Source information:
The record gives the reactivity of an RNA of 207 nucleotides to 2A3. Source: RMDB library M2RFPK, as collected in RNAgym. The reactions ran in a buffer of 150 mM KOAc, 10 mM MgCl2 and 150 mM bicine (pH 8.5), at 24 C.
[RMDB]
RNA sequence: GGGAACGACUCGAGUAGAGUCGAAAAACGAGGCGGUGCCUACUACGGUAGGCACGGCCUCGAAUUACGUUCAUCUACUUAAUCGUAGACGCAUCAAUACAUCAUUCAUGGAACGGGGGAUGGUGAAACUAGAAUCAAACGUUCGCGUUUGAUUCAACAACAACUUGGGGUUCGCCCCAAGUUGUUGAAAAGAAACAACAACAACAAC
Reactivity to 2A3 in 0.01 (KOAc 150mM, MgCl2 10mM, bicine 150mM(pH8.5), 24C), signal-to-noise 1, nucleotides 027 to 156: a000c010g000a000g000g000c150g030g000u000g000c030c030u000a000c000u010a010c150g100g000u000a020g000g000c000a000c000g010g000c000c000u000c000g000a000a000u050u060a010c000g000u020u020c000a000u000c010u000a020c030u070u160a040a020u210c030g010u000a010g020a000c000g020c010a080u110c150a140a080u070a220c020a000u000c000a000u010u010c020a020u040g070g020a010a010c020g000g010g010g050g000a000u000g000g090u060g010a050a020a010c060u110a110g000a000a000u000c000a000a010a010c000g030u120u140c300g000c010g050u000u000u010g000a000u010u010c010a000a010